[RMDB]
RNA sequence: GGGAACGACUCGAGUAGAGUCGAAAAGCGUACUACGGAGCGAAGAACAUAUGGUGCACGAUAAGAUCUUCCCAAAUAGGAAGAUCUUUUGACGUGCUCAUAUGGGAGCUCCGUAUCGCAAAACGCGCCCUAUCAAGUUCGCUUGAUAGGGCGCGAAGUAUCAUCUAAUCUUCGGAUUAGAUGAUACAAAAGAAACAACAACAACAAC
Reactivity to DMS in 0.01 (KOAc 150mM, MgCl2 10mM, bicine 150mM(pH8.5), 24C), signal-to-noise 1, nucleotides 027 to 156: g020c010g020u000a110c080u000a030c000g020g000a040g080c020g020a100a210g030a100a190c020a030u000a050u000g000g000u010g030c010a000c030g010a130u020a030a020g000a020u000c020u000u040c000c000c050a070a170a280u000a080g050g020a020a020g000a000u000c000u000u010u010u010g000a150c030g010u000g010c010u000c000a040u000a020u000g000g000g000a300g000c000u000c010c020g030u000a000u000c000g020c020a100a030a030a130c010g030c000g000c020c000c010u000a010u010c010a020a020g030u000u000c300g050c000u000u000g000a030u000a040g000g000g000c030g000c000g000a000a040
Reactivity to 2A3 in 0.01 (KOAc 150mM, MgCl2 10mM, bicine 150mM(pH8.5), 24C), signal-to-noise 3, nucleotides 027 to 156: g020c020g050u080a060c020u000a000c050g030g000a010g010c010g130a300a000g030a120a030c020a000u020a020u010g110g020u280g080c000a000c020g020a030u000a040a000g000a000u000c010u020u020c020c020c070a160a240a080u220a060g000g000a000a000g000a010u010c000u010u010u010u020g070a030c010g000u000g000c000u010c000a000u020a000u010g000g020g000a000g140c010u000c000c000g000u010a000u030c000g000c010a030a050a000a050c020g000c030g000c000c020c000u020a000u000c000a000a000g010u110u090c120g080c160u000u010g000a000u000a000g000g000g030c010g000c010g000a010a000
Source: RMDB library RNAMAK, as collected in RNAgym. An RNA of 207 nucleotides, treated with DMS and 2A3 and read out base by base. The reactions ran in a buffer of 150 mM KOAc, 10 mM MgCl2 and 150 mM bicine (pH 8.5), at 24 C. For DMS, 2,692 sequencing reads were counted. For 2A3, 2,850 sequencing reads were counted. 2A3 is a SHAPE reagent: it acylates the 2'-hydroxyl of flexible nucleotides of all four kinds.